About this RNA: Chemical mapping of a 170-nucleotide RNA with 2A3 and DMS. The RNA was probed in 150 mM KOAc, 10 mM MgCl2 and 150 mM bicine (pH 8.5) at 24 C. It was measured as part of the RMDB library 15KLIB. For 2A3, 111,966 sequencing reads were counted.
RNA sequence: GGGAACGACUCGAGUAGAGUCGAAAAUGGGUUCCUCUGAUGUCCAGUCCCUCUCCCGUCCGAGUGAAGGGAGACUCCGGAACUCCAGUCAUUUGAGGGACGAAUCCGCCCCCGGGCGCUCCCCUCGCACCUUCUGUGUUCGCACAGAAGAAAAGAAACAACAACAACAAC
Reactivity to 2A3 in 0.01 (KOAc 150mM, MgCl2 10mM, bicine 150mM(pH8.5), 24C), signal-to-noise 9, nucleotides 027 to 129: u150g050g010g000u010u010c010c000u010c050u060g060a060u070g040u030c030c020a010g010u000c000c000c000u010c000u000c010c010c010g060u020c030c030g160a110g070u290g060a050a040g010g000g000a020g010a010c040u050c060c040g030g020a070a050c010u010c030c030a030g040u040c020a060u030u060u140g020a040g000g010g000a000c020g020a030a070u040c020c010g030c020c000c000c000c010g010g010g000c020g010c010u030c000c000c000c010u020c030g050c010a100c010
Reactivity to DMS in 0.01 (KOAc 150mM, MgCl2 10mM, bicine 150mM(pH8.5), 24C), signal-to-noise 9, nucleotides 027 to 129: u050g010g000g000u000u010c010c000u030c050u050g040a090u040g030u030c030c070a050g000u020c020c020c040u020c000u010c020c030c010g030u020c040c020g060a130g040u080g010a050a060g020g010g010a050g000a050c100u040c100c080g040g020a070a050c020u010c020c110a100g030u000c010a030u000u030u070g010a040g000g020g020a030c030g020a070a080u030c050c030g010c010c000c000c020c020g030g000g010c000g020c040u030c010c000c000c010u030c040g040c080a090c100